Source information
The record gives the reactivity of an RNA of 177 nucleotides to DMS and 2A3.
[RMDB]
RNA sequence: GGGAACGACUCGAGUAGAGUCGAAAACUAUGUGAAUGAAAACUAUUUUACAGCAUUCGAACCCCACUUUGAAACUAAUGUUCUUCGUUCACCAGAGGCUUUGGAAUGGAUUAAGCAUUGGAAAUACUAUAUUCGUAUCUUUCGAGAUACGAAUAUAAAAAGAAACAACAACAACAAC
Reactivity to DMS in 0.01 (KOAc 150mM, MgCl2 10mM, bicine 150mM(pH8.5), 24C), signal-to-noise 7, nucleotides 027 to 126: c060u000a030u010g020u010g000a040a020u000g000a080a050a050a100c090u030a070u020u020u030u020a080c090a090g000c070a070u010u020c060g010a060a130c050c010c010c040a110c180u010u020u030g010a090a090a100c090u030a050a040u010g010u010u000c080u010u000c040g000u000u010c000a030c020c090a080g000a090g000g000c060u010u010u000g010g010a090a070u010g000g000a080u010u010a040a050g000c010a050u020u010g010g000a060a030a070u030a060c140
Reactivity to 2A3 in 0.01 (KOAc 150mM, MgCl2 10mM, bicine 150mM(pH8.5), 24C), signal-to-noise 9, nucleotides 027 to 126: c070u080a120u190g090u040g050a060a060u040g040a060a060a040a050c070u100a210u100u110u080u130a090c080a040g030c020a050u030u080c050g050a120a110c010c010c030c010a040c060u120u100u170g120a080a060a010c020u030a050a070u060g020u070u070c040u050u030c030g020u000u020c000a030c040c010a020g050a060g220g060c100u160u110u050g060g020a150a110u070g010g020a030u070u080a040a000g000c020a010u010u020g050g070a050a120a030u130a100c080